[RMDB]
RNA sequence: GGGAACGACUCGAGUAGAGUCGAAAAGAAAAGGAUUGGCUCAUAGGGCAGGGUUUGUUGGGCCUUUGAUGGAUCUUUUGGAAUCUGACUGGGACUACUUCUGGGCAACCGGAGGCGGACUCGGACGUAGGUAUCAAAAUUUCGAUUUUGAUACCUAAAAAGAAACAACAACAACAAC
Reactivity to DMS in 0.01 (KOAc 150mM, MgCl2 10mM, bicine 150mM(pH8.5), 24C), signal-to-noise 6, nucleotides 027 to 126: g010a070a050a060a070g000g000a070u000u000g010g010c030u000c040a070u010a090g010g000g010c060a040g010g000g010u010u000u000g020u000u010g010g000g010c010c040u000u000u010g000a110u000g000g000a110u000c010u000u000u010u000g000g030a090a090u020c050u020g000a110c030u000g000g010g010a110c040u000a070c020u000u000c010u000g010g000g000c260a080a140c010c000g010g000a040g000g010c050g000g000a060c010u000c010g020g010a080c130g020
Reactivity to 2A3 in 0.01 (KOAc 150mM, MgCl2 10mM, bicine 150mM(pH8.5), 24C), signal-to-noise 5, nucleotides 027 to 126: g050a000a050a000a010g080g030a060u090u110g030g000c000u010c030a070u140a140g010g040g040c060a020g060g030g030u100u160u120g060u070u070g020g010g000c010c000u040u030u060g050a060u040g020g010a030u020c000u030u110u060u090g100g060a080a080u060c070u070g060a070c010u030g020g000g040a030c010u030a030c000u040u010c010u030g000g020g000c030a060a050c020c000g010g010a000g000g000c010g020g020a030c000u000c000g000g000a020c040g050